[RMDB]
Structure probing data (DMS and 2A3) for a 177-nucleotide construct. It was measured as part of the RMDB libraries RFM100 and RFMREP. Conditions: 150 mM KOAc, 10 mM MgCl2 and 150 mM bicine (pH 8.5), 24 C.
RNA sequence: GGGAACGACUCGAGUAGAGUCGAAAAUGCAGUGAGGUCACCUCCUGGGUUUGUGACAUAGCAGUGGUUGCCACCGAGAUGAUAGCUUUAUCAGCAACUCUGCUUUGCAAUGACUUCACAGCAAGGUUCUAUAAACUGAAUUCGUUCAGUUUAUAGAAAAAGAAACAACAACAACAAC
Reactivity to DMS in 0.01 (KOAc 150mM, MgCl2 10mM, bicine 150mM(pH8.5), 24C), signal-to-noise 9, nucleotides 027 to 126: u010g020c010a060g030u010g000a020g010g010u000c010a100c070c030u010c110c160u020g010g010g010u020u010u010g020u000g020a150c120a020u000a010g010c010a010g000u030g010g000u000u000g000c000c110a140c260c190g000a090g010a100u010g010a060u010a060g010c190u020u020u000a040u010c050a140g000c010a010a010c000u010c000u000g000c000u000u000u010g000c060a060a140u000g000a010c010u000u010c000a000c010a070g010c020a070a100g010g010u010
Reactivity to 2A3 in 0.01 (KOAc 150mM, MgCl2 10mM, bicine 150mM(pH8.5), 24C), signal-to-noise 9, nucleotides 027 to 126: u060g000c010a010g010u000g010a000g010g010u010c010a030c020c020u120c040c110u230g060g030g020u110u170u170g140u080g030a080c010a020u040a000g000c000a000g010u060g120g020u020u000g010c030c040a150c080c130g090a100g020a140u140g020a050u070a050g100c080u130u150u070a050u040c020a000g000c000a000a000c000u000c000u010g000c000u020u010u010g000c000a030a060u060g000a000c000u000u000c000a000c000a010g000c010a030a040g080g000u020